Description: The data come from the RNA Mapping Database (RMDB), library 15KREP. An RNA of 177 nucleotides, treated with 2A3 and DMS and read out base by base. Reactivities are given for positions 27 through 126.
[RMDB]
RNA sequence: GGGAACGACUCGAGUAGAGUCGAAAAAGCUGUCAAAACAGGCGUUGCUAUUGAACAGCUGCUUUAUGCGAUCCAACAACUGUAUACUGGGUUCCAGGGAAAGCAAAUCCUUGGCAGUACCAUGUUGCAUAACGACGAUGUUCGCAUCGUCGUUAUGAAAAGAAACAACAACAACAAC
Reactivity to 2A3 in 0.01 (KOAc 150mM, MgCl2 10mM, bicine 150mM(pH8.5), 24C), signal-to-noise 2, nucleotides 027 to 126: a000g000c000u000g010u010c020a040a040a130a150c100a040g120g000c130g160u150u200g050c010u070a070u100u010g050a080a020c000a010g000c000u050g000c010u090u160u060a120u250g010c040g030a040u020c020c010a020a010c000a010a020c050u020g020u100a070u010a050c000u020g230g000g000u160u070c020c000a010g060g000g020a030a080a010g140c050a060a040a060u000c000c020u000u000g000g030c010a000g000u000a010c020c010a080u120g000u010u030g030
Reactivity to DMS in 0.01 (KOAc 150mM, MgCl2 10mM, bicine 150mM(pH8.5), 24C), signal-to-noise 3, nucleotides 027 to 126: a050g000c000u000g010u000c020a040a030a070a080c080a080g000g000c130g000u010u010g010c040u000a180u000u000g000a050a030c010a010g010c000u000g010c120u000u000u000a050u020g000c090g010a120u000c030c040a090a230c050a030a020c040u010g000u010a170u000a020c020u000g000g030g010u010u020c040c000a000g000g020g000a040a070a080g020c300a080a110a120u000c000c000u000u000g000g000c040a020g000u000a030c300c040a020u010g010u000u000g010
Annotation:
The reactions ran in a buffer of 150 mM KOAc, 10 mM MgCl2 and 150 mM bicine (pH 8.5), at 24 C.